[RMDB]
RNA sequence: GGGAACGACUCGAGUAGAGUCGAAAACUCGCUCAAACAUACAGAGGUGUUGUGCGAAAUGAAUCUCUCUGCAUUAGAAUGGUCGAAGAAUCAGCGGCAAUUCGAGACCGAAUUAGAAGCCGCAUUAACAGCUUUGGAACACGCCUUGCUGACGUGAGAUAUUAUGGACUUUCGAGUCCAUAAUAUCAAAAGAAACAACAACAACAAC
Reactivity to 2A3 in 0.01 (KOAc 150mM, MgCl2 10mM, bicine 150mM(pH8.5), 24C), signal-to-noise 7, nucleotides 027 to 156: c020u010c000g010c000u040c030a120a080a070c010a030u120a050c050a040g060a050g000g030u030g000u010u010g010u010g000c020g050a030a030a110u250g070a090a110u060c070u000c000u000c010u080g020c040a100u060u120a080g130a190a150u200g020g000u020c010g010a060a010g000a030a020u030c070a070g000c000g010g000c010a010a020u000u010c000g000a000g020a040c030c010g050a060a040u120u060a040g060a180a010g010c000c000g010c000a000u040u090a050a050c020a000g050c040u120u170u240g060g040a090a030c040a020c090g020c000c010u030u060g000c020u030g020a040c040g040u030g030a080
Reactivity to DMS in 0.01 (KOAc 150mM, MgCl2 10mM, bicine 150mM(pH8.5), 24C), signal-to-noise 4, nucleotides 027 to 156: c040u010c030g020c050u010c050a120a100a110c070a110u000a160c040a080g010a090g030g010u000g030u010u000g040u010g020c050g020a060a090a140u000g010a070a100u000c040u010c030u000c020u010g010c020a070u000u010a150g010a080a100u010g000g020u000c020g020a160a200g010a080a060u010c050a100g000c040g010g030c020a090a070u010u000c020g010a300g030a140c050c020g000a050a060u000u000a190g000a050a090g000c060c010g000c050a130u000u000a080a090c060a060g010c040u010u000u010g030g020a100a130c040a050c020g020c010c060u000u000g010c100u010g010a050c030g010u000g010a230

Conditions: 150 mM KOAc, 10 mM MgCl2 and 150 mM bicine (pH 8.5), 24 C. Chemical mapping of a 207-nucleotide RNA with 2A3 and DMS. DMS (dimethyl sulfate) methylates the pairing face of unpaired adenines and cytosines.